[RMDB]
RNA sequence: GGGAACGACUCGAGUAGAGUCGAAAAGAUAUGGAGAAGAUCUUUUGACGUCCGGGUGUCGGAAACGACACUGCGGACGAUAAGAUCCUCCUAAGUCAAAACGACACUCCGUUCGCGGAGUGUCGAAUCAAACAUGUUGGUUCGCCAACAUGUUUGAAAAAGAAACAACAACAACAAC
Reactivity to 2A3 in 0.01 (KOAc 150mM, MgCl2 10mM, bicine 150mM(pH8.5), 24C), signal-to-noise 2, nucleotides 027 to 126: g010a030u060a040u130g020g020a020g040a300a120g000a050u000c010u040u140u080u100g290a150c060g020u000c000c020g010g000g000u000g010u000c000g020g060a090a080a050c000g000a010c010a000c000u040g230c020g000g020a000c000g000a000u000a000a010g000a000u000c000c010u000c010c000u020a190a010g040u020c030a030a000a130a180c010g000a000c000a000c010u000c030c000g060u100u140c300g010c020g170g000a000g000u000g000u000c000g000a000a000
Reactivity to DMS in 0.01 (KOAc 150mM, MgCl2 10mM, bicine 150mM(pH8.5), 24C), signal-to-noise 3, nucleotides 027 to 126: g010a050u000a300u010g010g000a020g020a140a150g020a010u000c000u000u000u000u010g020a220c070g020u010c000c010g000g000g020u000g020u000c000g000g000a070a060a110c000g020a000c000a010c000u000g010c010g000g010a000c000g010a020u000a040a010g000a010u000c010c000u000c000c000u000a040a130g010u010c060a090a050a120a170c010g000a020c000a010c000u000c000c000g010u000u020c190g010c010g010g000a030g010u000g000u000c010g010a040a030